[RMDB]
RNA sequence: GGGAACGACUCGAGUAGAGUCGAAAAGACAAGAUCUCCUUCUCUCCAACGUGGUUGCCAACUCAUGAUUCUCCUAACCUGUGCUUGGAGAGACGUGGACCCAGAGUCAGAGGACCUCUGACUUCCAAAAACCCGUUUCGGUUCGCCGAAACGGGAAGUACAAUGACUACUUCGGUAGUCAUUGUACAAAAGAAACAACAACAACAAC
Reactivity to DMS in 0.01 (KOAc 150mM, MgCl2 10mM, bicine 150mM(pH8.5), 24C), signal-to-noise 1, nucleotides 027 to 156: g000a200c080a080a100g010a300u000c000u090c030c000u000u000c010u010c000u000c000c000a030a060c030g030u000g000g000u000u000g000c000c080a040a170c040u000c100a130u000g030a140u000u000c010u000c000c000u000a050a050c010c020u000g030u000g000c110u000u010g030g000a080g010a040g000a040c100g000u000g010g000a100c040c020c030a260g000a100g030u010c010a010g010a090g020g010a220c250c080u000c010u000g030a060c000u010u000c030c060a040a050a120a150a100c000c000c010g000u000u000u010c000g000g030u000u010c300g030c030c000g000a000a000a000c000g010g000g000a000a020
Reactivity to 2A3 in 0.01 (KOAc 150mM, MgCl2 10mM, bicine 150mM(pH8.5), 24C), signal-to-noise 3, nucleotides 027 to 156: g090a030c090a060a060g030a220u010c020u000c010c000u010u000c000u010c000u010c000c000a000a010c010g070u060g000g010u030u020g090c070c060a100a040c110u120c100a140u160g170a260u220u060c160u090c100c030u080a020a030c010c020u090g060u190g110c150u020u010g000g000a000g010a010g000a000c010g040u080g010g010a020c010c010c030a030g010a000g020u000c000a000g000a020g060g130a090c010c040u000c000u000g010a000c000u030u010c050c030a080a100a020a060a070c010c000c000g000u000u000u000c010g000g040u020u030c170g020c050c010g000a000a000a000c000g000g000g000a000a000

Chemical mapping of a 207-nucleotide RNA with DMS and 2A3.
For DMS the reverse transcriptase was MarathonRT.
The data come from the RNA Mapping Database (RMDB), library M2RFPK.
The RNA was probed in 150 mM KOAc, 10 mM MgCl2 and 150 mM bicine (pH 8.5) at 24 C.
Values are in units of 0.01, from 0 to 300, in steps of 10.
The 2A3 profile rests on 2,173 reads.